About this RNA:
Source: RMDB libraries RFM100 and RFMREP, as collected in RNAgym. An RNA of 177 nucleotides, treated with DMS and 2A3 and read out base by base. DMS adducts were read by reverse transcription with MarathonRT. The reactions ran in a buffer of 150 mM KOAc, 10 mM MgCl2 and 150 mM bicine (pH 8.5), at 24 C. High 2A3 reactivity points to a flexible backbone, as in loops and unpaired stretches. Values cover nucleotides 27 to 126. 2A3 adducts were read by reverse transcription with SuperScript II with manganese.
RNA sequence: GGGAACGACUCGAGUAGAGUCGAAAACAGGUCGGGGCGUCGGGGCAUUGAGCUCCCACAGCGUCAGGCAGGUCACCGAGGCUGCGCGGACUUGGGGAGCUAGCUUGGUGCGAGGCAAGUCUUUCCCGAUAAUUGAAGUCUUCGGACUUCAAUUAUCAAAAGAAACAACAACAACAAC
Reactivity to DMS in 0.01 (KOAc 150mM, MgCl2 10mM, bicine 150mM(pH8.5), 24C), signal-to-noise 7, nucleotides 027 to 126: c100a090g000g010u010c050g010g000g000g010c080g020u000c080g000g000g000g010c060a100u020u010g000a080g010c020u000c010c010c030a080c110a080g010c090g010u010c020a070g010g020c010a110g000g000u020c060a090c100c100g000a080g010g010c020u000g010c050g010c050g000g000a070c040u020u010g000g000g000g010a030g010c020u010a050g000c060u000u010g000g010u010g000c040g000a130g000g000c040a060a050g010u000c030u000u000u000c000c000c010
Reactivity to 2A3 in 0.01 (KOAc 150mM, MgCl2 10mM, bicine 150mM(pH8.5), 24C), signal-to-noise 9, nucleotides 027 to 126: c040a010g020g070u070c040g020g020g020g030c020g030u060c040g010g000g010g010c010a030u040u220g070a020g010c010u010c000c010c020a140c020a010g050c040g060u050c010a010g060g020c010a020g040g090u080c030a030c100c070g030a080g080g000c030u060g010c110g030c050g050g020a050c020u050u060g010g000g010g000a010g010c010u030a030g010c010u020u060g030g000u050g030c020g010a030g010g020c030a030a010g010u000c010u010u020u010c000c010c000